[RMDB]
RNA sequence: GGGAACGACUCGAGUAGAGUCGAAAAGGUAUCAUCCGUAACGGUGGUGAAGGUGUCGGCCUAUACCGUACUGAAUUCCUGUUCAUGGAUCGUGAUGCCCUGCCAACAGAAGAAGAACAGUACCAAAGGACUAGUAAUGCUUCGGCAUUACUAGUCCAAAAGAAACAACAACAACAAC
Reactivity to DMS in 0.01 (KOAc 150mM, MgCl2 10mM, bicine 150mM(pH8.5), 24C), signal-to-noise 2, nucleotides 027 to 126: g000g020u010a030u000c020a040u000c010c010g070u010a070a060c070g030g020u010g020g020u010g000a300a240g000g030u000g020u010c050g010g020c030c080u030a050u030a170c040c010g010u000a000c050u000g000a120a110u000u010c010c000u000g000u000u000c160a050u000g000g020a110u000c220g010u010g000a010u000g010c020c020c010u000g000c070c100a040a070c140a120g010a070a100g000a060a050g010a080a030c020a090g000u000a090c060c070a030a090a080
Reactivity to 2A3 in 0.01 (KOAc 150mM, MgCl2 10mM, bicine 150mM(pH8.5), 24C), signal-to-noise 2, nucleotides 027 to 126: g030g000u010a000u000c030a010u020c020c020g000u020a040a020c060g010g110u220g060g040u090g070a050a000g030g000u050g060u140c040g040g020c020c000u040a060u120a090c010c010g010u000a000c010u060g000a030a030u080u060c010c000u040g000u000u010c070a030u070g060g000a050u090c090g070u060g030a000u040g010c010c000c010u050g000c030c010a070a030c050a020g180a180a000g050a070a000g070a100a030c020a070g030u100a040c050c000a030a020a080